[RMDB]
RNA sequence: GGGAACGACUCGAGUAGAGUCGAAAAGUAGAAUACUGGUCAUUUUGGGAGGAAAACGAAUCAAUCGAAAACCUCGUUGCGCUACGCGAGGCCGAUCUCUAUACGUUCCUUUCGCAGUAUCAGCAAGAGCCGAUCGCGCUGGGUGGUAACGUGUUUAGUACUGAUGCAGAUUCGUCUGCAUCAGUACAAAAGAAACAACAACAACAAC
Reactivity to 2A3 in 0.01 (KOAc 150mM, MgCl2 10mM, bicine 150mM(pH8.5), 24C), signal-to-noise 2, nucleotides 027 to 156: g090u060a040g050a160a000u080a050c050u020g030g060u080c130a180u090u190u170u130g040g000g010a030g040g020a130a140a000a020c020g060a070a030u130c080a040a020u030c030g060a060a050a040a060c000c000u010c030g000u010u100g050c140g000c080u120a000c080g020c000g000a010g020g000c030c040g020a020u030c080u000c030u160a090u080a200c020g000u030u090c000c000u020u000u050c010g000c020a010g000u040a030u070c040a010g070c010a070a060g000a000g030c040c030g130a060u070c050g010c000g040c040u020g070g020g010u030g020g030u050a020a020c010g060u050g040u040u070u070a050
The record gives the reactivity of an RNA of 207 nucleotides to 2A3. It was measured as part of the RMDB library OK3TST. For 2A3, 1,050 sequencing reads were counted. The RNA was probed in 150 mM KOAc, 10 mM MgCl2 and 150 mM bicine (pH 8.5) at 24 C.